[RMDB]
RNA sequence: GGGAACGACUCGAGUAGAGUCGAAAACAUGACUCUUAAUGGUCUUUGGCUUGACAACACAGUCUGGUGCCCACGACACGUAAUGUGCCCGGCUGACCAGUUGUCUGAUCCUAAUUAUGAUGCCUUGUGAGCCGGCACUUCGGUGCCGGCAAAAGAAACAACAACAACAAC
Reactivity to 2A3 in 0.01 (KOAc 150mM, MgCl2 10mM, bicine 150mM(pH8.5), 24C), signal-to-noise 3, nucleotides 027 to 129: c060a060u150g010a000c000u020c010u090u110a080a060u300g000g000u050c000u100u030u060g000g040c000u010u060g000a000c010a000a000c000a000c010a000g000u000c020u130g000g020u140g020c010c050c030a050c030g140a000c050a000c020g130u050a210a000u100g020u020g000c000c020c020g010g000c010u010g060a090c020c040a000g010u000u000g010u000c000u000g020a050u000c000c000u050a010a040u060u060a030u150g190a010u040g010c000c000u050u050g100u000g050a050
This 170-nucleotide RNA was probed chemically with 2A3.
The RNA was probed in 150 mM KOAc, 10 mM MgCl2 and 150 mM bicine (pH 8.5) at 24 C.
For 2A3 the reverse transcriptase was SuperScript II with manganese.
Reactivities are rounded to 0.1 and cut off at 0 and 3.